Source: RMDB library M2RFPK, as collected in RNAgym. This 207-nucleotide RNA was probed chemically with 2A3. Values cover nucleotides 27 to 156. For 2A3, 511 sequencing reads were counted.

RNA sequence: GGGAACGACUCGAGUAGAGUCGAAAAAUCAGCCUUCGUUCUGUAAACGGGGUUGGAUCCGACUCUCAUAGGCUCUCCAACCCAACUCCUACUCUAUACGUCCUCGUCGUACAGAACGGUAACAUGUAAAACGAAGGCUGCUUCGGCAGCCUUCGAAGUAGUUGUGAACGUUCGCGUUCACAACUACAAAAGAAACAACAACAACAAC
Reactivity to 2A3 in 0.01 (KOAc 150mM, MgCl2 10mM, bicine 150mM(pH8.5), 24C), signal-to-noise 1, nucleotides 027 to 156: a000u070c010a000g040c000c020u010u020c030g000u010u010c010u000g000u010a000a000a100c090g000g000g000g000u010u020g040g020a060u300c000c000g040a030c030u100c010u090c230a190u190a180g010g010c000u040c000u000c010c000a000a020c000c020c000a000a030c010u040c020c000u010a090c000u000c050u060a090u050a160c040g110u180c040c080u090c030g000u060c050g020u000a000c000a000g030a020a020c010g000g000u080a040a020c080a150u140g140u290a000a080a020a030c000g000a000a000g000g000c000u000g050c000u020u020c040g030g030c050a030g000c000c000u000u000c000g000a020a000